[RMDB]
RNA sequence: GGGAACGACUCGAGUAGAGUCGAAAAGAGAGGUACAGAUACUAGUGAUCUCGAUCUGAUCUGCUAGGUGAUACAUGCUAGCAUCAGGAUCUGACUAGACUGAUCCUAGUAGUGAUCCUAGAUCUCAGAGCUCAGUUCCAUUCGUGGAACUGAGCUCAAAAGAAACAACAACAACAAC
Reactivity to DMS in 0.01 (KOAc 150mM, MgCl2 10mM, bicine 150mM(pH8.5), 24C), signal-to-noise 1, nucleotides 027 to 126: g020a040g000a190g000g010u010a180c300a060g000a050u000a050c030u030a050g030u000g010a000u000c000u010c050g000a150u000c000u000g010a110u000c020u000g000c000u000a020g010g030u000g010a210u000a170c100a080u000g010c010u000a000g000c090a060u000c110a030g000g000a020u010c030u010g020a030c110u000a060g030a070c120u000g010a040u000c120c000u000a000g040u000a060g000u000g000a160u000c000c040u000a020g010a020u000c010u000c040a140
Reactivity to 2A3 in 0.01 (KOAc 150mM, MgCl2 10mM, bicine 150mM(pH8.5), 24C), signal-to-noise 1, nucleotides 027 to 126: g060a000g000a010g000g040u110a060c000a000g160a140u040a060c000u080a020g060u100g300a020u030c010u000c070g010a040u040c000u030g020a020u030c030u070g000c010u010a040g150g000u000g080a100u140a290c080a060u260g170c010u000a000g000c000a020u000c020a010g030g030a020u040c050u060g160a140c100u180a040g040a060c080u120g010a000u010c000c010u000a000g020u000a000g000u000g020a020u030c000c000u040a030g090a110u080c050u000c070a020